[RMDB]
RNA sequence: GGGAACGACUCGAGUAGAGUCGAAAAGGGUAUGGCAUGGCACUCAUGCUGAAGGUUGAUGCCUGCCCCUGGAUACCCCCACCAGUUUUUUCGGGGCCCCAGGAAGCUGUGGGGUCUGAGUCAUACCACUUAUGAGUCAGUUCGCUGACUCAUAAGUAAAAGAAACAACAACAACAAC
Reactivity to DMS in 0.01 (KOAc 150mM, MgCl2 10mM, bicine 150mM(pH8.5), 24C), signal-to-noise 4, nucleotides 027 to 126: g020g000g030u000a020u010g010g010c000a010u000g000g010c020a050c040u000c010a140u020g020c210u000g010a080a050g020g030u000u000g010a070u010g000c000c000u000g010c050c030c020c010u000g000g020a160u000a300c090c020c000c010c050a250c070c030a060g010u010u010u000u000u000u000c050g000g040g000g000c060c020c000c020a050g010g010a110a110g020c120u010g010u000g000g000g010g010u000c020u000g010a040g010u010c020a070u000a230c020c020
Reactivity to 2A3 in 0.01 (KOAc 150mM, MgCl2 10mM, bicine 150mM(pH8.5), 24C), signal-to-noise 2, nucleotides 027 to 126: g060g000g010u060a090u300g050g010c030a030u050g040g000c020a040c160u030c020a040u250g110c140u080g050a070a000g080g000u060u130g270a000u090g010c000c010u000g020c000c020c010c010u000g000g020a070u250a300c000c000c090c020c000a000c000c030a040g020u000u090u010u000u140u250c030g020g000g010g030c050c010c000c000a030g100g040a080a060g000c220u230g060u100g090g000g000g000u020c010u040g000a000g000u000c010a030u040a110c000c010